This 177-nucleotide RNA was probed chemically with 2A3 and DMS.
RNA sequence: GGGAACGACUCGAGUAGAGUCGAAAAGCUGGUGUCGGGAAUGGGCAUCACGACAUCGAUGUCGUCCACGGGCAGCUCGCGUUUGAUUUUUUCCGCCAAGGACACGCCCAUAUCCAAGCGCGAUUGGCAUAUCGCACGACUUCGGUCGUGCGAUAUGAAAAGAAACAACAACAACAAC
Reactivity to 2A3 in 0.01 (KOAc 150mM, MgCl2 10mM, bicine 150mM(pH8.5), 24C), signal-to-noise 4, nucleotides 027 to 126: g020c020u060g000g100u060g080u100c010g000g080g070a080a120u140g090g070g000c020a040u060c040a010c040g070a040c010a060u100c120g070a080u120g020u040c040g020u000c000c010a030c000g000g030g010c010a010g000c040u020c010g000c010g010u030u000u150g160a230u070u040u040u040u080u050c030c020g020c070c050a100a110g030g010a020c020a020c100g020c000c000c000a030u090a050u080c040c010a000a040g000c010g000c030g070a080u030u070g040g020
Reactivity to DMS in 0.01 (KOAc 150mM, MgCl2 10mM, bicine 150mM(pH8.5), 24C), signal-to-noise 2, nucleotides 027 to 126: g020c100u000g010g050u000g000u020c050g020g030g000a050a020u020g000g000g010c060a060u000c040a080c020g030a090c140a020u020c070g010a100u020g030u000c080g000u010c070c000a020c040g000g000g000c100a080g010c050u010c100g030c050g000u030u000u030g000a050u000u020u000u020u030u000c020c070g000c120c070a020a060g010g010a090c180a160c070g000c000c080c020a100u000a110u020c050c000a060a040g020c050g000c000g000a220u000u000g000g000
Annotation: For DMS the reverse transcriptase was MarathonRT. It was measured as part of the RMDB library OK1LIB. For 2A3, 2,729 sequencing reads were counted.